RNA sequence: GGGAACGACUCGAGUAGAGUCGAAAACUUUGCCUGUUUAUUAGAUUCUAAAUAUUAUGUUUGGAAUCAAUUUAAGCAGAGAUUUGCAGAACAACACAACAUGCAUUGCGUGUUUGUGGAGUUUAGCGAUGCACUUUAGGUUCGCCUAAAGUGCAUCAAAAGAAACAACAACAACAAC
Reactivity to DMS in 0.01 (KOAc 150mM, MgCl2 10mM, bicine 150mM(pH8.5), 24C), signal-to-noise 1, nucleotides 027 to 126: c070u030u000u000g030c100c000u010g000u000u000u000a000u000u000a300g000a030u000u000c000u000a020a000a010u010a200u000u010a100u000g000u000u000u000g000g010a020a010u000c000a120a090u000u000u000a010a030g010c010a000g010a140g000a050u020u000u000g070c070a300g000a010a020c000a030a300c000a000c000a000a030c010a000u010g010c000a150u000u000g000c000g030u000g000u000u020u010g020u000g010g000a260g010u000u000u010a070g040c070
Reactivity to 2A3 in 0.01 (KOAc 150mM, MgCl2 10mM, bicine 150mM(pH8.5), 24C), signal-to-noise 1, nucleotides 027 to 126: c040u080u120u110g010c000c010u000g000u030u000u000a000u010u010a040g010a010u000u000c010u010a020a080a050u100a080u300u200a220u300g010u010u000u000g000g010a010a000u000c000a010a020u020u020u020a010a000g000c050a020g090a040g040a170u070u030u220g060c040a060g020a080a000c010a010a010c000a010c000a000a000c000a010u020g000c070a140u050u300g030c000g010u030g040u060u070u100g000u020g000g000a000g000u000u030u040a010g010c050
Source: RMDB library RFMREP, as collected in RNAgym.
Chemical mapping of a 177-nucleotide RNA with DMS and 2A3.
For 2A3, 965 sequencing reads were counted.
The reactions ran in a buffer of 150 mM KOAc, 10 mM MgCl2 and 150 mM bicine (pH 8.5), at 24 C.
DMS adducts were read by reverse transcription with MarathonRT.
For 2A3 the reverse transcriptase was SuperScript II with manganese.